[RMDB]
RNA sequence: GGGAACGACUCGAGUAGAGUCGAAAAGCGCGAUAGGAAGUAGGCUGAAGCAGCGCGGCAGCGCGAGGAAUGAAGCCCUACGGGUCGCAAACGUCCAACAGCAGAGACGACGCGUGUGUCGCGGCACAAUAAUUUUGUUAUUCGUAACAAAAUUAUUAAAAGAAACAACAACAACAAC
Reactivity to 2A3 in 0.01 (KOAc 150mM, MgCl2 10mM, bicine 150mM(pH8.5), 24C), signal-to-noise 9, nucleotides 027 to 126: g050c020g000c010g030a040u060a070g160g130a160a050g040u050a030g020g010c010u010g020a050a010g040c070a020g010c000g000c000g080g060c090a110g010c020g000c020g020a130g040g080a100a090u150g030a050a010g030c040c010c000u020a020c050g040g020g060u080c000g000c000a060a100a020c020g020u010c010c010a060a040c030a140g140c040a020g090a010g010a120c040g020a050c040g020c000g020u130g040u020g010u040c010g000c000g050g010c050a010c020
Reactivity to DMS in 0.01 (KOAc 150mM, MgCl2 10mM, bicine 150mM(pH8.5), 24C), signal-to-noise 9, nucleotides 027 to 126: g010c060g010c020g010a040u010a100g010g010a110a140g020u010a030g000g010c010u010g000a180a070g010c060a130g010c010g010c010g010g020c230a080g010c010g010c010g010a090g020g010a080a080u010g000a270a080g000c080c020c030u010a040c030g000g010g020u010c030g010c040a050a090a100c050g000u000c010c040a080a110c180a120g000c130a090g000a130g000a050c050g000a140c110g000c050g020u010g010u010g010u000c010g010c020g010g000c100a070c170